[RMDB]
This 177-nucleotide RNA was probed chemically with 2A3 and DMS. As a SHAPE reagent, 2A3 marks flexible, mostly unpaired nucleotides at the ribose 2'-OH. Values cover nucleotides 27 to 126.
RNA sequence: GGGAACGACUCGAGUAGAGUCGAAAAGGCUGGAUUUUUUCGCAAAAACUUUUGUCAAGACUCCCAGGAGUUGAUUCCUGAUAACGCCACUGACUCUGAAUGCUUCUAGCCCUUGCAGGUCAUUGAGCCACACUUUGGAAUUCGUUCCAAAGUGUGGAAAAGAAACAACAACAACAAC
Reactivity to 2A3 in 0.01 (KOAc 150mM, MgCl2 10mM, bicine 150mM(pH8.5), 24C), signal-to-noise 1, nucleotides 027 to 126: g020g000c000u070g080g040a100u060u050u050u030u190u260c000g030c000a000a020a100a110a190c030u100u070u090u000g090u050c040a040a050g000a040c010u010c000c050c000a030g300g000a010g000u000u090g110a300u020u050c020c000u040g060a040u110a110a070c070g030c030c000a070c020u040g020a020c030u020c020u200g040a080a040u050g030c000u070u090c050u090a020g010c010c060c000u000u080g010c000a030g030g030u020c010a050u030u070g030a030g010
Reactivity to DMS in 0.01 (KOAc 150mM, MgCl2 10mM, bicine 150mM(pH8.5), 24C), signal-to-noise 2, nucleotides 027 to 126: g010g020c030u000g000g000a010u010u000u000u000u000u010c240g000c210a090a070a050a080a120c040u000u000u010u000g010u000c050a090a200g010a050c030u000c010c070c050a160g010g010a020g000u000u000g000a200u020u000c010c000u010g020a080u020a050a080c120g010c060c040a050c040u010g020a070c070u010c000u010g000a100a060u010g000c020u000u020c050u020a070g000c040c130c050u000u000g010c050a050g030g010u000c020a070u000u000g020a120g000